[RMDB]
RNA sequence: GGGAACGACUCGAGUAGAGUCGAAAACGUAAAGGGCGAGCUUUUGUCCGGAAUGGUUCCGGCGUGAUCGGGCCAUGCAAUAGUUGCCAACGACAACUAUGCUCCGGUUGCUCAGGCAGCGUAACGCACAAUGGAACAACCUUCGGGUUGUUCCAAACAAUCUUACCCGGUUCGCCGGGUAAGAUUGAAAAGAAACAACAACAACAAC
Reactivity to 2A3 in 0.01 (KOAc 150mM, MgCl2 10mM, bicine 150mM(pH8.5), 24C), signal-to-noise 2, nucleotides 027 to 156: c040g020u060a080a030a090g090g040g000c040g020a050g020c050u000u080u220u300g080u090c000c000g000g060a040a030u100g030g010u300u280c020c000g000g000c060g160u210g100a250u050c000g000g010g000c010c040a010u080g000c000a100a240u000a040g020u010u000g030c030c070a150a050c050g050a110c010a010a000c020u000a020u030g000c010u000c000c000g000g040u010u110g020c030u040c030a010g070g040c000a000g000c030g060u100a050a040c090g020c050a030c070a090a230u050g020g000a000a010c000a000a000c000c000u020u100c190g010g000g000u000u010g000u010u000c000c000a000a000a000
Reactivity to DMS in 0.01 (KOAc 150mM, MgCl2 10mM, bicine 150mM(pH8.5), 24C), signal-to-noise 1, nucleotides 027 to 156: c040g000u010a060a060a110g050g000g040c030g020a100g020c060u000u000u010u000g040u020c080c010g000g000a120a090u000g020g000u000u000c000c010g030g020c120g030u020g000a040u000c040g000g050g040c010c020a070u010g010c070a110a110u000a050g020u010u000g020c000c000a210a100c170g050a130c000a020a000c000u000a070u000g050c050u010c010c000g030g000u000u000g010c010u020c070a130g000g030c050a080g000c000g030u000a100a170c050g020c060a070c040a160a290u000g010g010a000a040c000a020a010c010c000u000u020c300g010g050g030u000u000g020u000u010c010c000a030a100a070